[RMDB]
Chemical mapping of a 177-nucleotide RNA with DMS and 2A3. DMS adducts were read by reverse transcription with MarathonRT. The DMS profile rests on 3,651 reads. Conditions: 150 mM KOAc, 10 mM MgCl2 and 150 mM bicine (pH 8.5), 24 C.
RNA sequence: GGGAACGACUCGAGUAGAGUCGAAAAAAGAGUGGCCAGCUACAUGGACCACCCAGAAGGGAGGCACAUUGUAGGGUGGAACAUACGAGAUCUCACGACUGUCACUGCCCCUAAACAGGCACAAUGAUCUAACAACAGUGUUCGCACUGUUGUUAGAAAAAGAAACAACAACAACAAC
Reactivity to DMS in 0.01 (KOAc 150mM, MgCl2 10mM, bicine 150mM(pH8.5), 24C), signal-to-noise 4, nucleotides 027 to 126: a050a060g010a130g030u000g000g000c040c070a090g020c040u010a060c090a040u010g000g010a160c010c000a070c010c010c010a140g020a130a120g010g010g030a080g020g020c300a050c040a040u010u010g020u010a030g010g020g030u000g020g000a080a080c040a030u000a080c150g000a080g010a090u000c040u000c050a060c080g000a080c050u000g000u000c030a090c060u010g010c010c000c010c060u010a040a090a090c150a070g000g000c050a060c080a050a050u010g010a130
Reactivity to 2A3 in 0.01 (KOAc 150mM, MgCl2 10mM, bicine 150mM(pH8.5), 24C), signal-to-noise 4, nucleotides 027 to 126: a010a000g130a010g000u030g010g040c010c000a030g020c040u080a020c020a050u020g020g030a080c000c010a010c000c000c000a110g150a300a150g060g010g020a050g000g060c050a010c010a080u110u170g070u100a060g020g050g030u050g020g020a050a000c020a020u170a060c040g060a050g030a130u050c020u040c030a040c080g120a060c060u020g010u020c010a010c100u080g050c000c000c000c000u070a100a070a020c040a060g040g030c050a020c020a060a100u140g040a060